RNA sequence: GGGAACGACUCGAGUAGAGUCGAAAAUGACCCGUUGCUUCUGGUAGCUUCGGCUCCAGCAAUCACUAGGGGAUGCCUGUAAACCCGAACUGAUUGUCAUACAGAACAGGAUCGUCGCGUAGCACGUUGUGGGCGAAGUGACUAAAACUUACACAACCUUUAGAAAAUUGUUCGCAAUUUUCUAAAGAAAAGAAACAACAACAACAAC
Reactivity to 2A3 in 0.01 (KOAc 150mM, MgCl2 10mM, bicine 150mM(pH8.5), 24C), signal-to-noise 3, nucleotides 027 to 156: u160g100a070c010c000c020g100u130u200g070c090u080u090c010u020g060g060u250a010g000c000u040u030c180g090g000c000u000c000c000a000g000c000a000a000u000c000a000c020u020a010g000g000g000g000a010u040g010c000c000u000g000u020a100a090a050c000c010c000g010a020a000c010u000g000a010u020u010g020u080c010a040u140a200c110a040g080a090a000c000a000g020g000a010u010c010g000u000c000g000c010g050u080a000g000c000a000c020g000u000u000g000u000g000g000g000c000g020a080a000g010u000g010a000c000u000a000a000a000a050c040u090u160a040c000a000c000a000a010c000
Reactivity to DMS in 0.01 (KOAc 150mM, MgCl2 10mM, bicine 150mM(pH8.5), 24C), signal-to-noise 3, nucleotides 027 to 156: u010g020a210c000c010c060g050u010u020g000c040u010u000c070u010g000g010u010a020g010c010u000u010c110g030g040c000u000c010c020a070g000c010a030a030u000c000a010c010u000a300g020g020g010g020a140u010g030c100c070u000g020u000a110a130a300c000c020c010g000a170a160c150u000g010a030u010u000g000u000c020a080u000a070c040a060g010a120a150c090a070g010g000a090u000c050g000u000c010g000c010g020u000a200g020c030a050c090g030u000u010g050u000g000g020g010c020g000a110a220g020u000g000a100c030u010a070a050a110a110c060u000u000a100c040a030c050a050a120c050
Overview:
This 207-nucleotide RNA was probed chemically with 2A3 and DMS. The RNA was probed in 150 mM KOAc, 10 mM MgCl2 and 150 mM bicine (pH 8.5) at 24 C. For DMS, 3,922 sequencing reads were counted. Values cover nucleotides 27 to 156.